Chemical mapping of a 177-nucleotide RNA with 2A3 and DMS.
The DMS profile rests on 1,802 reads.

RNA sequence: GGGAACGACUCGAGUAGAGUCGAAAAGAGAAGUAAACUGUUAGCCGCCAGUGGCUUGACCCGCUGUGGCCGCGGCGGCCUAGUUGAGACUGAAACGGCGGGUAAGAGCUCGGAGAGACCGAGCAGAAGGUAAUGCAGUGUUCGCACUGCAUUACCUAAAAGAAACAACAACAACAAC
Reactivity to 2A3 in 0.01 (KOAc 150mM, MgCl2 10mM, bicine 150mM(pH8.5), 24C), signal-to-noise 2, nucleotides 027 to 126: g160a000g010a150a000g060u220a080a070a160c120u060g060u140u280a040g010c000c020g000c000c010a120g000u000g050g000c010u000u030g080a070c000c000c000g000c020u010g020u030g040g000c020c000g000c010g000g010c000g000g000c000c010u000a000g030u010u050g030a050g040a140c090u090g030a040a060a000c000g010g000c000g000g000g010u030a040a000g000a010g020c000u000c000g020g000a200g000a010g140a110c000c000g010a000g000c000a000g050a010
Reactivity to DMS in 0.01 (KOAc 150mM, MgCl2 10mM, bicine 150mM(pH8.5), 24C), signal-to-noise 1, nucleotides 027 to 126: g030a090g000a170a040g000u040a050a030a030c120u000g010u010u020a130g000c040c000g000c000c030a170g090u050g000g000c020u000u000g010a090c000c000c010g010c000u000g000u000g000g000c000c000g040c050g000g030c060g000g030c010c030u000a020g020u000u010g000a040g000a300c120u020g010a020a000a020c020g010g000c000g020g000g000u010a090a140g010a180g000c000u010c010g000g000a300g010a250g000a210c010c010g020a040g000c000a030g000a160